This 177-nucleotide RNA was probed chemically with 2A3 and DMS.
[RMDB]
RNA sequence: GGGAACGACUCGAGUAGAGUCGAAAAUGGUGUUAAGUGGAAUAAGUGGAAAAAUAUACAUAUAUGUACAGGGGGCUACAUAUAUGUAUAUGCCCCCUCGGUGGAGUAUAAGUAGGUAUAAGGUGGAACGUCAUAUGAUAUUCGUAUCAUAUGACGUAAAAGAAACAACAACAACAAC
Reactivity to 2A3 in 0.01 (KOAc 150mM, MgCl2 10mM, bicine 150mM(pH8.5), 24C), signal-to-noise 7, nucleotides 027 to 126: u090g020g010u050g030u110u090a120a070g040u070g060g060a080a080u100a170a050g030u140g040g040a050a050a020a080a010u020a000u000a010c000a000u010a000u000a000u010g010u010a030c100a100g000g010g020g060g010c020u010a000c000a000u010a000u010a000u020g010u000a000u000a000u010g000c000c000c000c010c000u010c010g030g000u030g000g030a030g020u040a040u010a130a030g070u070a020g020g030u060a100u030a110a050g040g010u030g040g040a040
Reactivity to DMS in 0.01 (KOAc 150mM, MgCl2 10mM, bicine 150mM(pH8.5), 24C), signal-to-noise 7, nucleotides 027 to 126: u010g010g020u000g010u010u010a050a110g020u010g000g000a080a050u030a070a080g010u020g000g010a020a080a060a100a030u000a010u000a010c000a010u000a010u000a010u000g000u000a020c120a120g000g000g000g000g010c160u000a010c010a010u000a010u000a010u000g010u000a010u000a000u010g000c090c030c010c030c020u000c030g000g000u010g000g010a070g010u010a050u020a030a070g010u010a040g000g020u010a050u010a050a060g010g020u010g000g010a120
The reactions ran in a buffer of 150 mM KOAc, 10 mM MgCl2 and 150 mM bicine (pH 8.5), at 24 C.